[RMDB]
RNA sequence: GGGAACGACUCGAGUAGAGUCGAAAAAGGUGGGGGCACCUCCCGCUUGCAGGGGAGAACGGCGCCAUUGACCCGCGCCAGCGACGAUGCAGAGCGAAGCGAUGAGGAGAAGCGGCGCCAUUGACUGAUAGCAUCAAGUAUUCGUACUUGAUGCUAUAAAAGAAACAACAACAACAAC
Reactivity to DMS in 0.01 (KOAc 150mM, MgCl2 10mM, bicine 150mM(pH8.5), 24C), signal-to-noise 9, nucleotides 027 to 126: a070g010g020u010g010g000g000g010g010c060a080c110c030u000c010c030c020g010c090u000u000g020c110a100g010g010g000g010a100g010a120a100c180g010g000c010g020c010c020a080u000u000g000a260c040c020c040g010c010g010c010c020a260g010c020g010a150c120g010a120u010g010c110a070g010a300g000c020g000a100a140g010c020g010a080u000g000a120g010g000a160g010a140a080g010c100g010g010c010g010c010c020a060u010u000g010a110c120u000g000
Reactivity to 2A3 in 0.01 (KOAc 150mM, MgCl2 10mM, bicine 150mM(pH8.5), 24C), signal-to-noise 3, nucleotides 027 to 126: a000g090g010u090g020g040g000g000g020c030a010c010c000u020c000c000c000g050c030u060u130g050c060a060g000g000g060g010a060g020a050a020c050g010g000c010g000c010c000a010u020u070g070a060c020c000c000g000c010g000c010c010a030g000c010g040a050c020g050a070u190g140c100a040g030a020g100c020g010a030a000g000c030g110a190u110g030a120g040g030a120g020a080a000g050c040g010g000c000g000c000c000a050u040u090g020a050c030u060g010

Structure probing data (DMS and 2A3) for a 177-nucleotide construct. Reactivities are given for positions 27 through 126. It was measured as part of the RMDB library OK2TST. DMS (dimethyl sulfate) methylates the pairing face of unpaired adenines and cytosines.